[RMDB]
Structure probing data (DMS and 2A3) for a 207-nucleotide construct. It was measured as part of the RMDB library OK3TST. 2A3 adducts were read by reverse transcription with SuperScript II with manganese.
RNA sequence: GGGAACGACUCGAGUAGAGUCGAAAAGCAACGAUAUUAUUAUCGGUAACGACGCGAAUAAUAUUCUGAACGGUGGUGCAGGCGAUGACGUUAUUUACGGCGGUGGCGGUGCAGAUACGCUGACGGGCGGUGCGGGCAAAGAUAUUUUUGUCUAUGCACGGUCAAGUUAAUUCGUUAACUUGACCGUAAAAGAAACAACAACAACAAC
Reactivity to DMS in 0.01 (KOAc 150mM, MgCl2 10mM, bicine 150mM(pH8.5), 24C), signal-to-noise 2, nucleotides 027 to 156: g030c020a080a060c020g000a020u000a030u010u000a190u010u000a070u010c020g020g030u000a160a160c080g020a060c050g050c080g000a060a040u010a060a120u000a140u000u000c040u010g020a080a100c090g000g050u010g030g040u000g030c030a090g030g000c050g010a100u000g000a060c050g000u000u000a100u000u000u000a110c060g020g020c010g010g020u010g020g000c030g020g050u010g000c050a040g000a210u000a060c040g010c020u000g020a130c090g000g000g040c050g050g020u000g020c040g000g000g010c020a010a040a030g020a130u010a030u000u000u010u000u000g010u000c030u000a120u010g000c190
Reactivity to 2A3 in 0.01 (KOAc 150mM, MgCl2 10mM, bicine 150mM(pH8.5), 24C), signal-to-noise 3, nucleotides 027 to 156: g070c070a020a050c060g010a010u000a010u070u090a060u070u060a070u100c010g000g040u130a140a090c160g080a050c040g070c020g050a000a010u050a010a010u030a080u100u080c050u160g080a130a030c040g050g030u070g040g030u060g000c050a010g030g000c040g070a050u080g030a020c010g020u060u030a100u080u170u120a050c040g010g000c030g010g000u010g010g000c040g000g000u020g000c040a020g010a050u100a040c040g000c020u060g050a040c060g030g000g010c050g000g000u050g000c080g000g000g000c030a060a050a000g110a010u010a150u110u120u030u020u010g030u000c030u060a060u110g080c080